The record gives the reactivity of an RNA of 177 nucleotides to 2A3 and DMS.
For DMS the reverse transcriptase was MarathonRT.
The DMS profile rests on 21,354 reads.
It was measured as part of the RMDB library OK2TRN.
For 2A3, 12,681 sequencing reads were counted.
2A3 adducts were read by reverse transcription with SuperScript II with manganese.
RNA sequence: GGGAACGACUCGAGUAGAGUCGAAAACUCACUAAGUUGCUGGCCAUAAGAAACAGCAGCCAUUGACAUGCUCAGUCAUCUCUGCUUGCAAUUGAUAAGGAGCUGUAAGGGGCACUAGCCAUAGGUGUAUUUCUUAUAUGUUCGCAUAUAAGAAAUAAAAAGAAACAACAACAACAAC
Reactivity to 2A3 in 0.01 (KOAc 150mM, MgCl2 10mM, bicine 150mM(pH8.5), 24C), signal-to-noise 8, nucleotides 027 to 126: c010u010c020a040c060u100a090a060g070u070u030g030c020u010g030g010c030c030a140u120a230a090g070a140a140a020c020a010g010c010a010g010c010c010a070u030u120g040a030c020a040u090g010c010u020c050a030g080u040c030a160u020c060u020c010u050g050c040u070u090g020c030a110a260u080u050g020a020u060a160a090g080g000a020g000c010u010g050u070a070a120g040g000g000g000c020a030c080u060a020g030c020c030a110u070a050g060g020u040g020
Reactivity to DMS in 0.01 (KOAc 150mM, MgCl2 10mM, bicine 150mM(pH8.5), 24C), signal-to-noise 9, nucleotides 027 to 126: c020u000c020a120c110u010a090a120g010u000u000g010c030u000g010g010c080c080a150u010a100a110g010a140a110a080c050a020g010c010a040g010c030c060a090u010u000g000a080c060a050u000g010c030u000c050a080g000u000c070a040u000c040u000c040u000g000c050u000u000g010c060a060a080u010u000g010a080u010a080a120g010g000a090g000c030u000g010u010a070a080g000g000g000g010c030a050c070u000a060g010c020c040a080u000a050g010g020u000g000